[RMDB]
RNA sequence: GGGAACGACUCGAGUAGAGUCGAAAAAAAAAGAUAUGGAGCUAUUAGGUGCUUCCGUGAUGACCAGUAUUCGGAAACGAAUACUGCAAGCGGAAGAACUACACCGAAGUAGCUCCUAAGUCAAAAAGACAGUAGUAUACUUCGGUAUACUACUGUCAAAAGAAACAACAACAACAAC
Reactivity to DMS in 0.01 (KOAc 150mM, MgCl2 10mM, bicine 150mM(pH8.5), 24C), signal-to-noise 3, nucleotides 027 to 126: a050a080a140a160a110g000a010u000a010u020g000g000a000g010c000u000a000u000u000a300g000g000u000g000c010u000u000c010c000g040u000g010a010u000g010a300c300c000a000g000u000a000u000u000c000g000g010a010a000a020c010g010a010a000u000a000c000u000g000c020a000a000g020c000g010g000a000a000g000a050a010c130u010a300c030a010c000c000g000a120a190g000u000a000g000c010u000c000c000u000a000a040g000u000c010a050a060a080a080a100
Reactivity to 2A3 in 0.01 (KOAc 150mM, MgCl2 10mM, bicine 150mM(pH8.5), 24C), signal-to-noise 2, nucleotides 027 to 126: a010a000a040a010a000g000a010u020a000u030g010g010a010g030c000u010a060u300u050a300g000g000u010g000c030u000u070c010c000g000u110g100a300u050g010a050c000c000a000g000u000a000u000u000c010g000g050a000a000a010c000g000a000a000u000a000c000u000g000c000a030a040g000c010g000g000a010a000g010a020a000c020u180a060c030a000c040c000g020a040a010g010u000a000g020c000u010c000c010u000a000a000g010u000c000a060a000a030a130a010
An RNA of 177 nucleotides, treated with DMS and 2A3 and read out base by base.
For DMS the reverse transcriptase was MarathonRT.
Conditions: 150 mM KOAc, 10 mM MgCl2 and 150 mM bicine (pH 8.5), 24 C.
For 2A3, 2,731 sequencing reads were counted.
Source: RMDB library TTRDES, as collected in RNAgym.